[RMDB]
RNA sequence: GGGAACGACUCGAGUAGAGUCGAAAAAGCACGAAGCCCAGCUGGUGAUCCUGGCCCAGGCUCUGGACCAUUACGACUGUCUGAUCCACAGCACACCGCACACGCUGGUCGAGCGGGGGCUGCAAUCGCCUCAAGCACAAUUCGUUGUGCUUGAGGCAAAAGAAACAACAACAACAAC
Reactivity to DMS in 0.01 (KOAc 150mM, MgCl2 10mM, bicine 150mM(pH8.5), 24C), signal-to-noise 1, nucleotides 027 to 126: a050g000c110a140c090g030a190a170g010c000c020c020a140g000c000u000g040g000u000g000a040u000c120c000u000g000g000c090c000c000a170g000g000c000u000c050u000g000g000a070c090c030a030u000u080a000c150g000a170c030u030g010u050c090u000g000a060u000c040c080a080c070a110g000c010a000c090a000c000c000g000c000a070c040a140c120g050c020u000g000g000u000c020g000a090g080c090g000g030g000g000g000c000u000g030c170a070a050u070c160
Reactivity to 2A3 in 0.01 (KOAc 150mM, MgCl2 10mM, bicine 150mM(pH8.5), 24C), signal-to-noise 3, nucleotides 027 to 126: a000g230c110a080c130g060a050a020g030c010c000c000a000g020c050u040g030g000u040g040a050u040c000c030u020g070g000c040c000c010a040g100g060c010u030c030u080g040g050a040c020c010a020u110u210a060c030g060a040c050u060g020u050c030u040g010a040u020c020c040a060c000a020g020c040a020c020a010c050c000g060c000a040c000a020c080g000c020u100g020g080u130c050g000a010g030c020g000g020g000g000g020c000u030g000c030a000a070u120c040